[RMDB]
RNA sequence: GGGAACGACUCGAGUAGAGUCGAAAAUUCAGGUUCGAUCGUCUCCGCCUCUUCGGCUGGUUUCACCUUGUCCCAUGAAACCUCGUAGCUCGUAGGUGUCACCAUUGUCACCUUGUAGCCUAGGCGCCCGAGCUGACGCCCAAUGUACCGCACGGCACUACUAGCCAUGUUUCGACAUGGCUAGUAGAAAAGAAACAACAACAACAAC
Reactivity to 2A3 in 0.01 (KOAc 150mM, MgCl2 10mM, bicine 150mM(pH8.5), 24C), signal-to-noise 3, nucleotides 027 to 156: u080u030c030a050g000g060u040u040c030g030a070u020c010g060u030c020u000c040c010g030c020c020u060c060u140u090c060g040g010c040u090g010g000u010u030u010c000a030c000c010u050u050g050u010c000c010c010a000u020g020a010a010a010c010c010u040c070g140u110a010g000c010u000c100g080u040a010g010g000u010g000u040c030a090c230c070a230u060u280g030u020c010a020c000c000u010u070g120u110a010g000c010c060u040a040g020g010c020g030c020c030c010g020a020g020c020u020g020a030c020g020c000c000c000a040a040u100g020u110a140c070c020g030c060a020c030g020g000c020a020
Reactivity to DMS in 0.01 (KOAc 150mM, MgCl2 10mM, bicine 150mM(pH8.5), 24C), signal-to-noise 1, nucleotides 027 to 156: u000u010c090a040g040g000u010u010c010g000a080u000c060g030u010c010u000c020c050g060c000c010u000c060u000u000c060g010g040c030u010g020g040u000u040u000c010a000c010c000u010u000g020u000c070c020c070a160u000g010a040a030a020c010c000u000c120g020u000a060g050c060u000c040g020u000a020g020g000u010g030u020c020a080c080c300a140u000u010g000u020c020a020c020c010u000u000g010u010a050g010c010c020u010a080g010g000c000g010c030c030c020g010a070g000c040u000g000a090c020g010c030c010c040a030a090u010g000u000a030c020c050g010c040a100c040g000g020c000a270
Chemical mapping of a 207-nucleotide RNA with 2A3 and DMS. 2A3 adducts were read by reverse transcription with SuperScript II with manganese. The RNA was probed in 150 mM KOAc, 10 mM MgCl2 and 150 mM bicine (pH 8.5) at 24 C. The DMS profile rests on 3,879 reads. As a SHAPE reagent, 2A3 marks flexible, mostly unpaired nucleotides at the ribose 2'-OH. For DMS the reverse transcriptase was MarathonRT.